Conditions: 150 mM KOAc, 10 mM MgCl2 and 150 mM bicine (pH 8.5), 24 C.
Chemical mapping of a 207-nucleotide RNA with 2A3.
Values cover nucleotides 27 to 156.
[RMDB]
RNA sequence: GGGAACGACUCGAGUAGAGUCGAAAACCUAGAGCUAAACAACACAACCUACUACCUGAAAUUUAAAUACCCCUCACAAACAUACAAAUUUUCCAACAUACUAGGAUAUUAUCCCUCCAUCAUACACCGCCUACCAACAUACCACAACCUAUCUAUACAUGAGUGAUAGCUUCGGCUAUCACUCAUGAAAAGAAACAACAACAACAAC
Reactivity to 2A3 in 0.01 (KOAc 150mM, MgCl2 10mM, bicine 150mM(pH8.5), 24C), signal-to-noise 1, nucleotides 027 to 156: c000c000u000a030g000a030g180c060u100a150a060a000c030a110a070c010a010c010a110a010c050c000u040a030c010u020a080c040c000u030g000a110a170a190u100u050u170a120a220a080u120a140c000c000c000c000u040c030a040c040a000a080a020c020a030u170a040c040a010a060a070u060u040u060u030c020c030a000a000c000a130u090a030c030u010a060g070g000a030u060a050u200u150a000u010c010c000c020u000c010c030a000u010c000a000u040a020c060a000c000c090g080c000c060u040a070c090c000a040a060c000a050u040a060c000c010a010c000a050a040c000c000u080a130u070c000u000a040u020a110
The 2A3 profile rests on 441 reads.